[RMDB]
RNA sequence: GGGAACGACUCGAGUAGAGUCGAAAAGACUGACUUCGGUCAGUCAAAAAAGCGUACUACGAUCGAGGUAGGAUACCGAUAAGUCCCAAAUAGGACUUUUGACGGUGCACUACUCCCCACCGAUCGUAUCGCAAAAAUUAACGGUUCGCCGUUAAAAUCAUGUUGACUGAUUCGUCAGUCAACAUGAAAAAGAAACAACAACAACAAC
Reactivity to DMS in 0.01 (KOAc 150mM, MgCl2 10mM, bicine 150mM(pH8.5), 24C), signal-to-noise 3, nucleotides 027 to 156: g010a000c010u000g010a030c000u000u000c300g050g010u010c000a030g000u000c000a000a030a040a090a120a090g020c010g020u000a050c150u000a000c000g030a020u000c000g000a280g010g010u000a000g010g010a250u000a040c020c000g000a140u010a020a010g040u000c000c010c020a100a080a210u000a060g010g010a050c010u000u000u000u000g000a240c060g000g000u000g010c300a160c010u020a040c000u000c180c060c030c020a300c210c010g000a010u000c000g040u000a010u000c000g000c030a040a060a110a070a180u000u000a020a050c010g010g030u000u000c300g030c030c010g040u000u000a010a030a190a210
Reactivity to 2A3 in 0.01 (KOAc 150mM, MgCl2 10mM, bicine 150mM(pH8.5), 24C), signal-to-noise 3, nucleotides 027 to 156: g000a000c010u000g000a000c010u050u070c180g080g010u010c010a000g030u000c020a040a000a020a060a000a000g060c060g020u080a110c030u000a000c010g020a000u000c000g000a010g010g020u010a010g000g020a020u050a070c010c000g030a010u010a140a000g010u050c030c030c000a130a150a050u280a070g000g000a000c000u090u030u000u120g230a120c020g000g000u010g000c090a000c110u030a010c010u080c100c050c010c010a030c030c000g010a010u000c010g010u000a010u220c020g000c010a020a050a070a000a090u080u030a000a000c000g000g060u050u080c300g010c080c020g040u020u020a020a020a040a050